[RMDB]
RNA sequence: GGGAACGACUCGAGUAGAGUCGAAAACGAUCGUGAGAUGGAGAUUCCUGUACCCGACGAGGAGGGGCGGUUCGACAUCUUGAGCAUCAAGACGAAGAACAUGCAACUCGACGACGAGGUGGACCUCACCCAAUCGUCUUUUCGAAGACGAUUGGGUAAAAGAAACAACAACAACAAC
Reactivity to 2A3 in 0.01 (KOAc 150mM, MgCl2 10mM, bicine 150mM(pH8.5), 24C), signal-to-noise 2, nucleotides 027 to 126: c030g020a070u090c020g010u080g100a130g010a060u040g040g060a050g010a090u090u010c000c020u000g000u040a100c040c000c000g000a030c010g000a020g070g070a030g000g010g020g010c000g010g000u000u000c000g000a020c000a010u010c000u010u020g040a040g130c080a220u230c020a020a030g010a050c000g020a040a040g000a030a000c020a060u230g000c000a010a060c000u010c020g210a050c020g010a010c020g030a130g020g030u060g060g040a100c010c020u020c060
Reactivity to DMS in 0.01 (KOAc 150mM, MgCl2 10mM, bicine 150mM(pH8.5), 24C), signal-to-noise 2, nucleotides 027 to 126: c120g010a060u000c020g000u000g010a110g020a060u000g000g020a090g020a300u020u000c010c010u010g040u010a120c050c000c000g010a110c020g000a050g000g000a040g000g000g060g020c030g000g010u000u000c000g020a300c200a080u000c050u000u000g000a140g020c300a150u000c020a000a000g020a030c030g020a030a300g000a010a000c020a020u010g010c020a050a040c000u010c000g000a140c020g000a110c060g000a110g010g000u000g010g010a130c100c020u030c080
Background
This 177-nucleotide RNA was probed chemically with 2A3 and DMS. It was measured as part of the RMDB library OK2TRN.